[RMDB]
RNA sequence: GGGAACGACUCGAGUAGAGUCGAAAAUCGGUCUCAAACGCGGCAUCGAAAAGGCCGUGGAGAAGGUCACCGAGACCCUGCUCAAGGGCGCCAAGGAGGUCGAGACCAAGGAGCAGAUUGCGGCCACGCCUCGGGGACCUUUCGAGGUCCCCGAGGCAAAAGAAACAACAACAACAAC
Reactivity to 2A3 in 0.01 (KOAc 150mM, MgCl2 10mM, bicine 150mM(pH8.5), 24C), signal-to-noise 1, nucleotides 027 to 126: u010c050g000g000u070c030u000c000a180a200a040c020g000c010g000g000c010a050u120c270g290a040a000a040a040g130g000c020c000g000u010g010g000a090g050a070a000g130g000u140c010a000c080c000g000a000g000a000c000c090c040u060g080c000u000c020a170a280g070g040g000c060g000c150c000a050a030g260g000a080g000g050u170c030g000a000g020a030c000c020a000a060g190g000a070g000c050a030g020a170u220u180g010c100g000g110c000c000a070c080
The record gives the reactivity of an RNA of 177 nucleotides to 2A3.
The data come from the RNA Mapping Database (RMDB), library OK1LIB.
The RNA was probed in 150 mM KOAc, 10 mM MgCl2 and 150 mM bicine (pH 8.5) at 24 C.
The 2A3 profile rests on 364 reads.